[RMDB]
RNA sequence: GGGAACGACUCGAGUAGAGUCGAAAACUGGUCACUGAUACCCGUGAAUAUCUGGAUGUGGUGCCACAACAUACCUCAUUUACCAAUGCGCAAUUAUUGGAAAUCAUGAUGGCGCAGGAUUUCCAAGCGCUUAUUGGACCUUCGGGUCCAAUAAGCGAAAAGAAACAACAACAACAAC
Reactivity to DMS in 0.01 (KOAc 150mM, MgCl2 10mM, bicine 150mM(pH8.5), 24C), signal-to-noise 1, nucleotides 027 to 126: c030u000g000g000u010c020a160c070u000g010a100u000a080c040c030c010g010u000g000a120a110u010a030u010c050u020g030g010a030u000g030u000g030g010u000g010c040c030a030c070a080a060c090a100u000a070c030c030u020c040a080u020u000u020a160c090c070a130a060u000g000c000g020c020a070a070u000u000a250u010u000g030g000a040a060a020u010c010a040u010g030a040u000g020g000c050g060c030a110g000g010a080u000u010u000c020c020a060a120g010
Reactivity to 2A3 in 0.01 (KOAc 150mM, MgCl2 10mM, bicine 150mM(pH8.5), 24C), signal-to-noise 1, nucleotides 027 to 126: c000u010g080g020u040c040a000c030u090g040a040u120a140c050c010c000g000u040g060a050a080u090a110u240c060u090g020g030a030u050g080u050g110g100u040g040c040c030a070c000a070a020c000a030u100a210c000c000u040c120a110u030u050u070a160c060c000a120a150u120g020c070g000c080a080a090u160u060a160u140u070g010g030a050a010a050u040c010a010u070g030a050u070g100g000c040g000c000a000g050g000a000u000u000u000c000c000a000a030g090